[RMDB]
RNA sequence: GGGAACGACUCGAGUAGAGUCGAAAAAGAUUGAGGUAAUUAUGCGCCAGCUCGUUACUGAGAAUAUUCGUGCCGUCAUUAAUCCGCAGAAUGCAAAUCCCCACCGGGGCGGAUGCCACGAUUUUGCGAAAGUGAUAGCAUUCGUGCUAUCACUUUCAAAAGAAACAACAACAACAAC
Reactivity to 2A3 in 0.01 (KOAc 150mM, MgCl2 10mM, bicine 150mM(pH8.5), 24C), signal-to-noise 5, nucleotides 027 to 126: a000g200a080u120u110g040a050g060g010u060a070a070u080u160a100u210g030c030g020c010c000a020g000c020u010c050g050u040u070a070c020u040g020a010g050a130a070u170a120u150u060c050g000u040g050c030c000g050u020c000a040u050u160a040a080u030c030c010g020c010a010g080a140a020u090g030c030a030a050a110u030c020c000c000c000a040c060c050g030g000g030g000c000g050g030a040u070g030c020c000a030c060g090a120u050u010u030u130g040c060
Reactivity to DMS in 0.01 (KOAc 150mM, MgCl2 10mM, bicine 150mM(pH8.5), 24C), signal-to-noise 5, nucleotides 027 to 126: a060g010a140u010u010g010a170g000g010u000a050a050u020u000a100u010g000c040g030c060c070a070g020c010u000c160g030u000u010a040c050u020g010a140g000a080a110u010a060u010u000c040g020u010g010c060c040g010u000c040a050u010u020a070a090u000c040c020g020c030a090g020a050a060u000g000c110a030a060a120u010c010c000c000c050a100c160c050g000g000g000g010c020g000g020a060u020g010c090c010a030c070g000a110u010u010u000u010g010c300